[RMDB]
RNA sequence: GGGAACGACUCGAGUAGAGUCGAAAAAGAGCAAGAAAGAUACGCUCGGGAAGCCGAGGUACGCUUCCUUCGUGGUAAAUGGCAGAGGCGGUACCGAAGAAUCUAUGAUUUGAUAGAACUGUGUGGCUCUCUGCACCACAUCUGGCAAAACUUGCUCACUACCGGUUAUCUUCGGAUAACCGGUAGUAAAAGAAACAACAACAACAAC
Reactivity to DMS in 0.01 (KOAc 150mM, MgCl2 10mM, bicine 150mM(pH8.5), 24C), signal-to-noise 1, nucleotides 027 to 156: a070g000a060g010c010a040a020g010a050a080a110g000a150u000a050c030g040c030u030c090g030g020g020a110a050g020c000c010g070a140g030g030u000a030c060g050c010u000u000c000c000u020u010c050g000u010g030g000u000a070a140a020u030g010g010c080a070g030a040g000g080c040g020g020u010a060c060c030g000a130a130g010a100a090u000c030u020a080u000g010a210u000u000u000g010a120u000a030g010a050a220c050u000g010u020g000u000g000g000c060u010c030u000c010u000g000c080a030c010c000a040c040a090u000c040u000g030g010c110a040a110a090a300c030u000u000g000c000u000c020
Reactivity to 2A3 in 0.01 (KOAc 150mM, MgCl2 10mM, bicine 150mM(pH8.5), 24C), signal-to-noise 3, nucleotides 027 to 156: a000g000a000g010c000a000a000g010a150a100a000g040a070u100a080c080g040c150u040c020g030g010g010a060a010g060c060c060g060a050g000g070u120a040c080g000c040u040u030c000c020u030u090c090g000u000g020g000u090a180a250a240u170g090g000c000a010g000a000g050g030c080g040g010u050a040c010c030g020a070a030g050a060a050u000c010u030a000u020g160a300u170u170u290g080a030u010a010g030a050a070c030u020g060u060g030u080g240g000c010u040c000u000c010u140g000c000a000c010c000a000c000a030u080c090u080g020g000c020a010a000a030a110c000u010u000g000c000u000c010